[RMDB]
RNA sequence: GGGAACGACUCGAGUAGAGUCGAAAAAGCGACUACUACGGUAGUCGCAAGCAAUUAAAGUAAUGGGCUCAUUUUUGUUUGGUUGUAAUGUGACUGAAUGGAAGAGUGCAUUGGCUAGAUUGAGAAACUAGAUGCCUACAUUCGUGUAGGCAUCUAGAAAAGAAACAACAACAACAAC
Reactivity to 2A3 in 0.01 (KOAc 150mM, MgCl2 10mM, bicine 150mM(pH8.5), 24C), signal-to-noise 4, nucleotides 027 to 126: a000g010c000g000a000c010u010a000c000u020a010c180g150g000u000a000g000u010c000g000c000a000a000g040c000a010a080u070u090a110a010a000g020u060a010a010u010g030g090g000c000u000c050a240u050u010u000u050u030g020u010u000u030g000g020u040u020g070u140a140a180u300g030u070g150a020c010u000g000a010a020u010g030g000a010a030g000a020g000u050g130c000a010u020u000g040g050c010u000a020g010a070u020u050g040a080g100a090a030a000
Reactivity to DMS in 0.01 (KOAc 150mM, MgCl2 10mM, bicine 150mM(pH8.5), 24C), signal-to-noise 2, nucleotides 027 to 126: a150g010c000g010a020c010u000a000c000u010a080c150g020g000u010a000g000u000c000g010c000a030a030g000c030a020a050u010u010a020a040a030g000u000a060a000u000g020g000g010c000u010c000a100u020u010u010u000u000g040u020u010u000g000g000u000u000g000u020a130a120u020g010u010g010a030c010u010g000a030a020u000g010g000a010a020g010a010g030u000g000c010a020u000u010g000g000c030u000a100g000a020u000u000g000a120g010a160a070a130